[RMDB]
RNA sequence: GGGAACGACUCGAGUAGAGUCGAAAAGGUUUCAACACGGAUGCGGUCUCGUGUGCCAAGUGUGAGCGGACGCGAAGCGCUGCGAGCCAGUCGGUCACGUACCGAAGCCCUUCCGAGGGGCAUCCCUGGACCAUCAGAUGUUCGCAUCUGAUGGUCCAAAAGAAACAACAACAACAAC
Reactivity to 2A3 in 0.01 (KOAc 150mM, MgCl2 10mM, bicine 150mM(pH8.5), 24C), signal-to-noise 2, nucleotides 027 to 126: g220g000u010u040u070c020a030a020c000a020c040g000g010a010u000g000c000g060g120u040c040u020c060g000u070g020u060g000c000c030a100a070g020u000g020u040g140a090g010c140g070g020a070c020g020c020g090a070a040g010c040g010c060u060g000c000g000a000g000c000c000a080g030u020c010g000g000u020c020a040c290g080u080a000c010c000g040a020a020g000c010c020c000u060u050c040c050g130a060g000g000g000g000c000a040u010c010c030c000u020
Source: RMDB library RFM100, as collected in RNAgym. Chemical mapping of a 177-nucleotide RNA with 2A3. For 2A3 the reverse transcriptase was SuperScript II with manganese.